[RMDB]
RNA sequence: GGGAACGACUCGAGUAGAGUCGAAAAUUAUGAGUACAUAGUAGGUACAUAUAUUUAUGGGCUACAUGAGAUGUUCUGAUACAGGCAUGCAGUGCAAAAUAACCACAUCAUGGAGAAUAGGAUAUCCAUCCCAUCAAGCGUUUAUCCUUUGUGUUAAUACCAUAAUACGGUUCGCCGUAUUAUGGUAAAAAGAAACAACAACAACAAC
Reactivity to DMS in 0.01 (KOAc 150mM, MgCl2 10mM, bicine 150mM(pH8.5), 24C), signal-to-noise 3, nucleotides 027 to 156: u010u000a070u000g000a140g030u000a040c040a090u000a130g010u020a030g050g000u010a080c040a100u010a100u010a080u000u010u000a080u020g000g000g020c020u010a020c030a060u010g010a090g030a150u010g010u010u010c020u010g010a170u000a070c040a060g000g030c040a030u010g020c050a060g060u010g010c050a050a060a070a040u010a080a140c040c030a040c030a070u000c070a110u000g010g000a120g010a060a100u000a030g010g030a050u010a060u010c030c020a090u000c010c000c040a130u020c070a050a110g000c100g020u000u000u000a020u010c010c020u000u020u000g020u010g010u000u000a060a220
Reactivity to 2A3 in 0.01 (KOAc 150mM, MgCl2 10mM, bicine 150mM(pH8.5), 24C), signal-to-noise 3, nucleotides 027 to 156: u190u080a050u150g100a040g040u020a020c020a020u110a050g040u040a080g080g060u080a030c020a020u100a000u010a050u120u190u040a060u040g020g010g030c030u130a010c050a050u060g030a080g020a120u060g010u100u020c010u020g020a020u050a170c030a050g050g030c010a010u050g010c030a030g000u010g030c020a000a000a040a190u070a110a030c030c000a010c010a070u050c000a010u040g030g020a050g040a140a020u120a080g010g020a020u010a030u000c040c020a030u020c030c020c000a030u070c030a040a010g060c020g060u080u090u060a060u060c010c000u050u070u080g000u020g000u010u070a070a130